[RMDB]
An RNA of 207 nucleotides, treated with 2A3 and DMS and read out base by base. The DMS profile rests on 3,919 reads.
RNA sequence: GGGAACGACUCGAGUAGAGUCGAAAACAUCACGUCCUCGUCGUACAGAGUGGUAACAUGUGUCACCACAUAUCCAAGCUUGGGUACACGGGCUUGACCCAACCCCUUGGGCGGAUGGUGGCACAUGAAAAGAAGUAACACUUCGGUGUUACUUCAACUGGCUAUUAAACUUCGGUUUAAUAGCCAGAAAAGAAACAACAACAACAAC
Reactivity to 2A3 in 0.01 (KOAc 150mM, MgCl2 10mM, bicine 150mM(pH8.5), 24C), signal-to-noise 4, nucleotides 027 to 156: c030a070u090c040a020c070g100u040c020c030u070c040g180u040c040g030u120a070c080a110g050a040g060u090g050g040u130a090a030c000a010u000g000u000g010u010c000a000c010c010a050c080a190u190a030u050c010c010a010a010g020c030u040u030g000g000g000u020a010c020a030c040g020g020g000c010u220u260g170a300c000c000c000a020a030c000c010c000c000u000u010g010g000g000c000g000g020a040u010g010g000u000g000g000c000a000c000a000u000g000a000a000a000a010g000a000a000g000u000a000a010c000a000c010u040u050c250g100g000u000g000u000u000a000c000u000u000c000a010a020
Reactivity to DMS in 0.01 (KOAc 150mM, MgCl2 10mM, bicine 150mM(pH8.5), 24C), signal-to-noise 2, nucleotides 027 to 156: c050a130u010c080a060c050g010u010c000c020u000c050g020u000c080g030u000a130c090a080g000a180g010u000g000g010u000a090a120c040a040u000g020u010g020u010c010a000c000c000a040c050a110u010a040u010c010c000a040a160g000c060u000u000g030g000g070u000a060c120a050c090g000g040g040c030u000u000g000a110c040c000c000a040a070c060c070c010c000u000u000g020g010g010c080g040g000a110u000g010g020u000g010g050c010a010c010a000u000g010a040a030a090a100g020a010a040g000u010a010a010c000a010c000u000u010c250g040g020u010g010u000u010a010c020u000u010c010a030a060

Values are in units of 0.01, from 0 to 300, in steps of 10. For DMS the reverse transcriptase was MarathonRT. Source: RMDB library M2RFPK, as collected in RNAgym. Conditions: 150 mM KOAc, 10 mM MgCl2 and 150 mM bicine (pH 8.5), 24 C.